Annotation
Structure probing data (2A3) for a 177-nucleotide construct. For 2A3 the reverse transcriptase was SuperScript II with manganese. 2A3 is a SHAPE reagent: it acylates the 2'-hydroxyl of flexible nucleotides of all four kinds. The reactions ran in a buffer of 150 mM KOAc, 10 mM MgCl2 and 150 mM bicine (pH 8.5), at 24 C.

RNA sequence: GGGAACGACUCGAGUAGAGUCGAAAAGCUUGCUCUAGGACACCCACAGUGGGGAGAGGGAGUGGGUGGCAGAGAGGCCAGCUUUUGUGUGUCAGAGGAAAUGGCCUCUUUUGGUGGCUGCUGUGACUCACUCGUGCUACUUCGGUAGCACGAGUGAAAAAGAAACAACAACAACAAC
Reactivity to 2A3 in 0.01 (KOAc 150mM, MgCl2 10mM, bicine 150mM(pH8.5), 24C), signal-to-noise 1, nucleotides 027 to 126: g010c010u050u120g010c020u100c040u070a070g040g050a000c000a020c020c030c000a000c020a070g080u170g030g090g020g000a160g050a130g050g070g000a040g000u020g000g000g000u050g010g000c020a050g030a010g000a020g090g000c000c010a020g000c010u040u050u040u040g070u020g060u130g130u120c000a000g000a000g130g000a090a210a240u070g010g000c000c000u020c000u040u060u050u020g080g020u030g010g000c020u010g030c000u040g060u060g130a070c000